RNA sequence: GGGAACGACUCGAGUAGAGUCGAAAAUUGGGGGGACACUAACCCCCCCGCGCUCAGUAACGGCACGGCCGCGGCCCCGACGGGACGCAACGCCGUGAGGCUCGCGAACUGCCGCCUCAGCUCGGCACAGCCUAUUGGUUUUCGAACCAAUAGGCUGAAAAGAAACAACAACAACAAC
Reactivity to 2A3 in 0.01 (KOAc 150mM, MgCl2 10mM, bicine 150mM(pH8.5), 24C), signal-to-noise 4, nucleotides 027 to 126: u120u020g000g000g000g000g000g010a020c040a020c260u130a120a160c010c000c000c000c000c000c000g020c010g000c010u060c010a030g030u080a100a030c030g040g000c000a000c050g040g000c040c030g000c010g010g000c000c000c020c010g170a100c110g000g020g010a020c050g030c130a140a070c090g050c020c020g000u020g000a020g010g000c030u070c110g010c000g020a090a050c020u040g000c010c000g010c000c010u060c020a030g010c010u020c000g000g010c020a010
Reactivity to DMS in 0.01 (KOAc 150mM, MgCl2 10mM, bicine 150mM(pH8.5), 24C), signal-to-noise 4, nucleotides 027 to 126: u030u030g000g000g030g030g000g000a130c140a120c170u070a150a130c080c000c010c000c000c000c000g000c140g000c010u000c040a060g000u040a080a090c090g000g030c020a050c110g000g020c090c160g000c010g000g000c020c000c010c080g030a170c160g010g000g020a030c110g000c050a070a130c090g020c000c020g000u010g000a060g010g000c010u030c030g000c010g000a090a140c100u020g000c020c010g020c090c010u000c110a070g000c050u000c010g000g000c030a180